[RMDB]
RNA sequence: GGGAACGACUCGAGUAGAGUCGAAAAACAACUUACAAGCACGCACCAUCUUCUCCCACUGCUCCGUAUUGCAGUCGCGGGGCUUCACAGCGCGUACAGGCAUCCGUGCUCGCUCGUACGCACACGGGCGGGACCAUCCAUUCGUGGAUGGUCCCGCAAAAGAAACAACAACAACAAC
Reactivity to 2A3 in 0.01 (KOAc 150mM, MgCl2 10mM, bicine 150mM(pH8.5), 24C), signal-to-noise 1, nucleotides 027 to 126: a000c050a000a050c020u190u100a100c070a120a050g000c030a000c110g000c000a000c020c000a060u050c070u070u080c000u050c000c000c000a060c100u050g000c000u000c000c060g100u100a080u080u260g050c030a000g070u060c000g060c050g000g000g000g000c000u040u090c080a040c020a000g050c020g040c000g070u060a020c010a060g000g060c020a030u070c030c030g060u080g040c100u000c030g000c000u030c040g020u060a000c060g020c070a000c010a010c020g080g000
Structure probing data (2A3) for a 177-nucleotide construct. Values are in units of 0.01, from 0 to 300, in steps of 10. The reactions ran in a buffer of 150 mM KOAc, 10 mM MgCl2 and 150 mM bicine (pH 8.5), at 24 C. For 2A3, 727 sequencing reads were counted.